[RMDB]
About this RNA:
Conditions: 150 mM KOAc, 10 mM MgCl2 and 150 mM bicine (pH 8.5), 24 C. The record gives the reactivity of an RNA of 207 nucleotides to 2A3.

RNA sequence: GGGAACGACUCGAGUAGAGUCGAAAAUGAGAGUAUAUUGUAUACCGUAAGAGAAUCAACUCUUCAUCAUGGAUGGGAUUGUGAAGGCUGAACUAUAAAAUUCAGCAUUGACAGCAUCCUCAAUUAAUAAUUCUUGGUGACAGAAUAAUACAGCUGGCAGUCGAUGAAUGUUCGCAUUCAUCGACUGAAAAGAAACAACAACAACAAC
Reactivity to 2A3 in 0.01 (KOAc 150mM, MgCl2 10mM, bicine 150mM(pH8.5), 24C), signal-to-noise 1, nucleotides 027 to 156: u170g000a010g000a040g060u080a110u050a010u140u030g070u040a140u020a130c030c050g000u120a090a000g040a000g010a080a160u090c020a150a200c010u000c000u000u020c000a010u030c000a030u030g030g000a060u050g030g020g000a050u110u030g010u100g000a030a030g090g000c000u000g000a000a000c020u010a040u120a300a160a120a100u000u000c000a000g000c000a000u000u070g040a020c000a040g000c000a040u030c000c000u030c040a000a080u030u220a100a130u080a110a040u070u000c000u030u040g030g000u000g000a000c040a040g050a050a020u150a030a040u040a080c130a090g030c010u020g010g000